[RMDB]
This 177-nucleotide RNA was probed chemically with 2A3 and DMS. The 2A3 profile rests on 14,441 reads. For 2A3 the reverse transcriptase was SuperScript II with manganese.
RNA sequence: GGGAACGACUCGAGUAGAGUCGAAAAGACCCUGGCCCGGUGGAGAUGAGACCCUGGCCUGGUGGGCUUCAGGCCCCACCCUGCGGCGCACCCUCCAGCUGGGGAAGUCCAUGGGGUGUGUGGGAUCGUUGGAUUACUAUUUCGAUAGUAAUCCAACAAAAGAAACAACAACAACAAC
Reactivity to 2A3 in 0.01 (KOAc 150mM, MgCl2 10mM, bicine 150mM(pH8.5), 24C), signal-to-noise 4, nucleotides 027 to 126: g060a010c000c000c010u020g080g000c010c010c030g150g010u030g020g070a090g010a180u240g060a070g070a150c010c000c000u010g000g000c010c000u000g000g020u020g010g080g010c000u060u040c030a020g060g000c010c000c020c000a030c080c000c000u010g010c020g010g000c040g000c070a060c020c000c010u020c020c020a030g000c040u020g000g000g000g020a030a020g080u000c020c000a020u070g030g000g040g000u030g050u060g020u030g030g030g030a150u110c090
Reactivity to DMS in 0.01 (KOAc 150mM, MgCl2 10mM, bicine 150mM(pH8.5), 24C), signal-to-noise 8, nucleotides 027 to 126: g000a160c020c000c000u000g000g000c010c010c030g010g070u000g000g010a070g010a160u010g010a200g010a170c020c010c010u000g010g030c120c080u000g010g020u000g010g000g000c030u000u000c060a060g000g000c060c010c090c030a050c100c000c010u000g010c090g000g010c150g020c150a160c140c010c130u000c050c110a080g010c050u000g000g010g000g010a130a260g010u010c010c020a030u010g000g010g010g010u000g020u010g010u000g010g000g000a130u000c090